[RMDB]
RNA sequence: GGGAACGACUCGAGUAGAGUCGAAAAUAUGGGCAGUUCGCUGCCCAUACGAGCGGAGUCCGGCACUAUGAGCCCGCAGCGUUGGUGCGUAGCCGCGGUGCAGAGACCAAGCCUUCGGGCUUGGUAAACGUCAUCUUUGAUUCGUCAAAGAUGACGUAAAAGAAACAACAACAACAAC
Reactivity to DMS in 0.01 (KOAc 150mM, MgCl2 10mM, bicine 150mM(pH8.5), 24C), signal-to-noise 3, nucleotides 027 to 126: u000a000u000g000g000g020c000a010g020u000u010c240g020c000u010g000c000c000c000a010u000a000c050g010a080g010c040g000g010a110g010u000c020c000g010g020c030a040c070u010a060u000g000a160g010c000c020c030g010c060a050g000c040g010u000u010g040g010u000g010c110g010u000a170g010c010c010g010c070g010g010u010g010c060a110g000a140g000a040c000c000a000a010g000c000c000u000u020c170g030g000g010c000u000u000g000g000u000a010a050
Reactivity to 2A3 in 0.01 (KOAc 150mM, MgCl2 10mM, bicine 150mM(pH8.5), 24C), signal-to-noise 2, nucleotides 027 to 126: u050a020u010g000g000g000c000a010g010u040u070c140g090c130u010g000c000c000c000a000u000a000c000g010a010g000c030g000g050a080g030u000c040c070g040g000c030a020c030u100a100u190g060a020g000c000c020c050g010c040a020g050c030g070u110u270g090g010u030g010c050g050u090a010g000c020c010g000c020g010g060u040g000c020a020g030a000g010a120c000c000a000a010g010c000c010u040u070c200g050g000g000c000u000u000g000g000u020a050a020

Overview:
This 177-nucleotide RNA was probed chemically with DMS and 2A3. For DMS the reverse transcriptase was MarathonRT. For 2A3, 3,716 sequencing reads were counted.